[RMDB]
Chemical mapping of a 207-nucleotide RNA with 2A3 and DMS.
The data come from the RNA Mapping Database (RMDB), library OK3TST.
For 2A3 the reverse transcriptase was SuperScript II with manganese.
The 2A3 profile rests on 986 reads.

RNA sequence: GGGAACGACUCGAGUAGAGUCGAAAAUAGGAGAGCCCAGCCAAAAGCAGAUGUUUCAGAGAUUAACCCGGAGGAUGGCAAAGAGGUAGUUAGUGAUUCAGAGCUUAGCAAAUGGCUAAAAACAGACGACCAGCAAGAAAUGGAACAGCAGAGAAAAUCUAAGAAUAGUAUUCGUACUAUUCUUAGAAAAAGAAACAACAACAACAAC
Reactivity to 2A3 in 0.01 (KOAc 150mM, MgCl2 10mM, bicine 150mM(pH8.5), 24C), signal-to-noise 2, nucleotides 027 to 156: u190a020g000g040a040g020a000g000c030c010c030a010g030c030c020a000a150a090a000g030c020a040g000a140u040g030u010u050u020c010a010g010a020g010a130u070u060a050a020c000c010c040g050g010a010g030g020a030u070g020g010c060a080a070a020g010a000g000g020u020a010g010u050u090a020g000u040g060a060u060u020c040a050g010a000g060c000u060u060a010g000c020a040a110a200u130g010g000c010u030a030a000a030a000a100c000a010g070a050c020g010a020c000c020a010g010c020a050a050g050a040a080a090u110g000g010a000a000c000a020g140c050a010g140a020g010a040a070a150a260
Reactivity to DMS in 0.01 (KOAc 150mM, MgCl2 10mM, bicine 150mM(pH8.5), 24C), signal-to-noise 1, nucleotides 027 to 156: u000a100g060g030a190g060a200g050c000c040c000a060g000c010c020a140a110a200a170g010c090a080g020a120u000g040u020u040u000c060a060g030a140g000a140u000u000a010a100c080c010c010g010g040a060g000g020a060u000g000g000c040a020a110a110g000a080g000g080u020a040g050u000u000a150g030u010g000a140u000u000c110a080g050a070g010c030u000u000a100g030c030a040a030a080u000g010g030c000u000a040a020a020a080a080c080a180g000a100c070g000a100c040c030a030g000c010a060a110g000a040a070a060u000g000g010a070a090c010a080g030c020a080g000a060g000a110a070a070a160